[RMDB]
RNA sequence: GGGAACGACUCGAGUAGAGUCGAAAAUACUGUGCCACCUGGUGGAUAGCUCGGCUCGGAUGCCGACGAAGGACGUGCCAAGCUGCGAUAAGCCUGAGGGAGCCGCACGGAGGCUAAGAACUCAGGAAUACUGCAGGAUCUUCGGAUCCUGCAGUAUAAAAGAAACAACAACAACAAC
Reactivity to DMS in 0.01 (KOAc 150mM, MgCl2 10mM, bicine 150mM(pH8.5), 24C), signal-to-noise 2, nucleotides 027 to 126: u040a160c030u030g010u000g010c070c030a050c000c070u000g000g000u000g020g000a070u060a110g000c060u000c050g000g000c000u000c100g010g030a150u070g020c050c000g030a090c060g020a180a050g000g000a110c020g060u000g030c000c030a040a140g000c050u000g000c020g060a040u020a100a090g020c000c000u000g000a010g000g000g000a070g020c000c000g060c030a080c150g010g030a160g040g030c000u000a090a110g000a050a150c020u000c000a020g000g020a140
Reactivity to 2A3 in 0.01 (KOAc 150mM, MgCl2 10mM, bicine 150mM(pH8.5), 24C), signal-to-noise 2, nucleotides 027 to 126: u060a020c030u000g020u090g050c000c010a030c000c000u030g090g000u020g030g080a020u060a090g040c070u000c040g000g000c000u000c060g000g130a190u180g060c000c010g020a090c040g050a000a000g140g000a090c060g000u030g000c000c000a010a010g030c040u100g010c020g060a130u050a170a100g010c000c010u060g000a020g000g030g000a020g000c040c020g090c000a070c100g100g040a030g000g000c000u070a090a000g030a030a000c000u010c000a010g000g000a000